[RMDB]
RNA sequence: GGGAACGACUCGAGUAGAGUCGAAAAAGCGCACGGUACGCCGUGCGCAAGAAUCUGUUCGUAGUAUAGCGAAACAGGGUAAUAUAAAGAAAUGUACACUAAGAAGCGAGCCUUACGAGGCUCGCAAUCUAGGCCAGAUUUUCGAAUCUGGCCUAGAAAAAGAAACAACAACAACAAC
Reactivity to 2A3 in 0.01 (KOAc 150mM, MgCl2 10mM, bicine 150mM(pH8.5), 24C), signal-to-noise 1, nucleotides 027 to 126: a030g000c000g020c000a000c000g010g030u000a000c160g020c110c000g010u070g000c000g000c000a000a000g000a000a090u030c000u000g000u000u000c010g000u070a100g000u040a210u030a170g000c020g020a120a140a000c000a000g000g080g150u070a070a000u070a090u100a200a100a000g180a020a080a020u100g000u050a020c050a030c100u130a150a000g150a150a000g090c000g000a000g020c000c020u120u010a090c200g040a000g000g000c000u000c000g000c000a000a000